[RMDB]
RNA sequence: GGGAACGACUCGAGUAGAGUCGAAAAGAUAUGGAUAUUGUGCUCGAUAAGCAUCACAUCGGAAACGAUGUAUGCUUUUGACGAGCGUCAAUAUCCUAAGUCAAAAGGUAUUUCUUCGGAAAUACCAUCCGUCUAGCUAGUUCGCUAGCUAGACGGAAAAAGAAACAACAACAACAAC
Reactivity to DMS in 0.01 (KOAc 150mM, MgCl2 10mM, bicine 150mM(pH8.5), 24C), signal-to-noise 1, nucleotides 027 to 126: g000a040u010a300u000g000g000a010u000a000u000u000g070u010g010c000u000c000g030a160u010a010a010g000c000a010u000c260a000c000a010u000c020g000g020a120a050a170c000g010a010u000g010u000a000u000g000c000u030u000u000u010g010a170c130g000a050g000c000g000u000c000a000a030u000a000u020c000c000u010a000a040g010u000c040a070a120a220a120g010g010u000a000u000u000u000c010u000u010c280g020g000a030a000a000u000a000c000c000a010
Reactivity to 2A3 in 0.01 (KOAc 150mM, MgCl2 10mM, bicine 150mM(pH8.5), 24C), signal-to-noise 1, nucleotides 027 to 126: g030a000u100a050u110g010g010a000u000a000u000u030g000u020g000c000u040c010g140a170u050a220a020g000c000a010u040c220a000c000a020u010c010g040g070a080a080a010c000g000a000u010g000u020a000u010g000c000u030u000u060u070g100a140c090g000a010g000c010g010u050c000a000a000u000a000u000c000c000u000a070a010g060u030c030a030a100a130a110g000g000u020a020u020u030u000c010u030u160c300g210g010a020a020a020u010a030c020c000a000